About this RNA: Source: RMDB library OK2TRN, as collected in RNAgym. Structure probing data (2A3 and DMS) for a 177-nucleotide construct.
RNA sequence: GGGAACGACUCGAGUAGAGUCGAAAACAGUCAAGGUGAAGGCGGGCCAGACCAUCGCCGCAUUCUACCAGAGCACCGUCAUGAUCUUUGGCACGAUGGCUCGCUACAUGCAUAGAGUUAGGGAAAACGUAUAUGCGACUUUCGAGUCGCAUAUACGAAAAGAAACAACAACAACAAC
Reactivity to 2A3 in 0.01 (KOAc 150mM, MgCl2 10mM, bicine 150mM(pH8.5), 24C), signal-to-noise 3, nucleotides 027 to 126: c030a000g100u090c050a040a060g030g030u040g090a050a010g030g000c010g030g010g040c030c000a020g060a080c000c030a090u090c050g040c050c030g000c000a020u120u000c010u060a080c000c020a030g010a020g020c040a070c090c030g060u060c030a260u160g080a100u050c040u060u040u050g030g010c050a010c100g090a080u080g010g010c010u030c030g000c000u070a040c000a080u090g050c020a010u080a090g070a000g080u050u060a070g080g020g000a060a050a000a050
Reactivity to DMS in 0.01 (KOAc 150mM, MgCl2 10mM, bicine 150mM(pH8.5), 24C), signal-to-noise 3, nucleotides 027 to 126: c090a130g020u000c060a090a120g000g000u000g000a130a120g020g020c010g020g000g010c030c040a070g000a130c080c090a060u000c090g030c020c070g000c080a080u000u000c050u000a100c020c020a090g000a050g010c150a100c030c020g020u000c070a070u000g000a090u000c010u000u000u000g000g000c040a090c130g000a130u000g000g000c030u010c030g010c040u000a060c120a060u020g010c060a040u000a050g000a070g010u000u000a090g000g000g020a080a030a100a150
The RNA was probed in 150 mM KOAc, 10 mM MgCl2 and 150 mM bicine (pH 8.5) at 24 C. The DMS profile rests on 2,736 reads.